[RMDB]
RNA sequence: GGGAACGACUCGAGUAGAGUCGAAAACCUUCUGGAACCAAGCGGUUGGUUCCGAGGGGGGUGUGAUCCAGGUACCGCCGUAGAAACUGGAUUACGACGUCUACCCGGGAUUCAAACCCGGUCCCCUCCAGAAGUGAUUCUGGAUGAAGAGUCGCGCGUAGUACAUUCAGUUCGCUGAAUGUACUACAAAAGAAACAACAACAACAAC
Reactivity to DMS in 0.01 (KOAc 150mM, MgCl2 10mM, bicine 150mM(pH8.5), 24C), signal-to-noise 2, nucleotides 027 to 156: c000c000u000u010c020u000g010g030a030a020c010c010a020a180g070c210g010g000u000u000g010g000u000u020c060c010g030a060g000g010g030g010g050g010u010g020u000g030a030u010c000c010a040g020g010u010a110c060c030g040c020c250g020u000a110g020a100a140a200c040u010g020g030a110u010u010a070c040g010a070c010g010u000c030u000a070c060c010c000g020g010g000a140u000u000c180a090a190a180c020c010c020g010g000u000c020c010c000c060u010c000c000a060g020a050a030g010u000g020a300u000u000c040u000g000g050a060u000g010a120a160g000a070g050u010c010g020c030g020c200
Chemical mapping of a 207-nucleotide RNA with DMS.
DMS adducts were read by reverse transcription with MarathonRT.
Values cover nucleotides 27 to 156.